Chemical mapping of a 177-nucleotide RNA with DMS and 2A3. The RNA was probed in 150 mM KOAc, 10 mM MgCl2 and 150 mM bicine (pH 8.5) at 24 C. It was measured as part of the RMDB libraries RFM100 and RFMREP. For 2A3 the reverse transcriptase was SuperScript II with manganese.
RNA sequence: GGGAACGACUCGAGUAGAGUCGAAAACUGCAUGCAGAGGAAGGGCCCCAGCUCCACAGACUGCCAAAGUCGACAGGGUGCCUCCUCACCAAAAAUGGUGAGACAAGAUUUCAUCUUGUCUGCUGAGUCCACAGCAGUUAUUCGUAACUGCUGUGGAAAAAGAAACAACAACAACAAC
Reactivity to DMS in 0.01 (KOAc 150mM, MgCl2 10mM, bicine 150mM(pH8.5), 24C), signal-to-noise 4, nucleotides 027 to 126: c070u000g000c120a070u020g010c130a130g000a090g010g010a040a050g020g010g000c020c000c000c020a150g020c090u010c040c050a100c190a200g000a010c010u000g000c190c220a060a100a030g000u000c020g020a140c290a180g010g020g030u020g000c040c010u010c030c010u000c010a070c100c140a000a040a080a080a060u010g010g010u010g000a000g010a060c020a010a020g000a060u010u030u020c200a090u000c010u020u000g020u000c000u000g000c010u010g000a110g040
Reactivity to 2A3 in 0.01 (KOAc 150mM, MgCl2 10mM, bicine 150mM(pH8.5), 24C), signal-to-noise 4, nucleotides 027 to 126: c040u100g050c060a100u140g010c030a010g000a010g070g010a120a110g060g020g000c010c000c000c010a030g010c040u060c030c020a070c020a060g010a010c010u030g120c140c090a160a210a000g010u010c010g010a030c040a020g010g010g000u080g050c000c000u010c000c000u000c000a010c000c000a000a060a100a050a170u280g010g000u070g110a010g010a000c010a000a010g000a000u130u250u240c040a050u030c000u000u000g000u000c000u000g010c000u020g010a020g050